[RMDB]
RNA sequence: GGGAACGACUCGAGUAGAGUCGAAAAUAAUGGAAGGGGACCUAGACAUUGAUAUCCUGAUGGAAGGGUCACCAAUGCUCUGGGCAGCAGAAGUGGAGGAGAUGGGAGAGGCUAUGGUGAUACUCAAUAAUGAGUACCCGUUCGCGGGUACUCAUUAAAAAGAAACAACAACAACAAC
Reactivity to DMS in 0.01 (KOAc 150mM, MgCl2 10mM, bicine 150mM(pH8.5), 24C), signal-to-noise 1, nucleotides 027 to 126: u000a110a090u010g000g000a100a050g010g040g000g000a060c030c000u000a000g010a180c000a010u000u010g030a090u000a080u020c040c030u010g020a150u000g020g000a200a130g020g000g000u000c110a010c040c000a010a060u000g010c120u020c030u000g000g000g020c090a040g010c120a060g000a030a080g000u000g000g000a080g010g020a120g000a100u000g000g070g000a080g000a030g000g000c150u010a040u020g010g000u000g000a060u010a060c040u000c030a080a200